An RNA of 177 nucleotides, treated with DMS and 2A3 and read out base by base. Conditions: 150 mM KOAc, 10 mM MgCl2 and 150 mM bicine (pH 8.5), 24 C. For DMS, 1,767 sequencing reads were counted.
[RMDB]
RNA sequence: GGGAACGACUCGAGUAGAGUCGAAAAGGUAGCCACUUCGGUGGCUACCAAAGAGAUAGUACCUAUUGAGUUCCUGUGUAGGUACUCAUGACAGGAUGUCUAAAACAUGAUUCUUCGGAAUCAUGAAGAAGCAUAGAUCGUUCGCGAUCUAUGCUUCAAAAGAAACAACAACAACAAC
Reactivity to DMS in 0.01 (KOAc 150mM, MgCl2 10mM, bicine 150mM(pH8.5), 24C), signal-to-noise 2, nucleotides 027 to 126: g000g010u010a000g010c000c000a010c000u000u010c210g050g030u000g000g000c000u010a000c000c000a010a060a080g010a150g030a060u000a040g010u000a050c000c000u000a050u020u000g000a100g000u010u000c010c000u000g010u000g000u010a010g000g000u000a010c000u000c110a060u000g010a090c200a110g030g020a130u010g000u000c010u010a140a030a090a180c000a010u000g010a050u000u000c000u000u020c110g030g010a020a010u000c000a000u000g020a040a080
Reactivity to 2A3 in 0.01 (KOAc 150mM, MgCl2 10mM, bicine 150mM(pH8.5), 24C), signal-to-noise 2, nucleotides 027 to 126: g000g010u000a000g000c000c000a030c000u050u070c220g080g010u010g000g000c020u000a000c000c000a010a000a000g010a000g000a010u070a050g040u060a060c010c000u010a040u040u110g070a080g000u010u060c000c000u070g020u090g110u180a000g000g020u020a010c000u010c030a050u110g020a030c040a010g170g120a170u170g060u030c020u090a060a080a010a040c000a000u000g000a010u000u000c000u000u050c230g090g000a010a000u010c010a000u010g000a010a010